Chemical mapping of a 177-nucleotide RNA with DMS and 2A3. The 2A3 profile rests on 14,643 reads. For 2A3 the reverse transcriptase was SuperScript II with manganese.
RNA sequence: GGGAACGACUCGAGUAGAGUCGAAAAGAGAAUGGUCAUCGUUGACCACACACCGAACCACUCGAGAGGUGUGCAUGACCUGCUUGGCGAAACGAGAGAGGUCAGGAAUCCAGAGGGUUAACUCAGCAGUAGGAAGGAAAUUCGUUUCCUUCCUACUAAAAGAAACAACAACAACAAC
Reactivity to DMS in 0.01 (KOAc 150mM, MgCl2 10mM, bicine 150mM(pH8.5), 24C), signal-to-noise 8, nucleotides 027 to 126: g000a100g020a080a080u010g000g010u010c010a070u030c230g030u020u010g000a040c000c000a140c010a020c020a040c030c000g000a220a180c080c080a080c100u010c080g010a090g010a300g000g000u010g010u010g010c090a120u010g000a020c000c010u000g010c020u000u010g000g020c130g020a060a110a160c070g000a060g010a060g010a030g000g000u010c000a020g000g010a130a080u020c040c020a130g000a070g000g000g000u020u010a070a100c080u010c060a070g010c220
Reactivity to 2A3 in 0.01 (KOAc 150mM, MgCl2 10mM, bicine 150mM(pH8.5), 24C), signal-to-noise 9, nucleotides 027 to 126: g140a010g040a060a110u090g010g020u010c030a110u090c180g200u110u190g000a010c000c000a000c000a000c000a000c000c000g030a080a060c020c020a150c110u160c080g120a120g000a030g130g020u030g010u020g040c010a080u050g010a010c000c010u070g100c010u070u040g080g050c150g070a160a120a050c070g000a070g010a010g010a000g040g020u020c020a000g050g060a030a040u050c030c020a030g020a040g050g050g010u050u080a070a080c040u030c060a060g000c010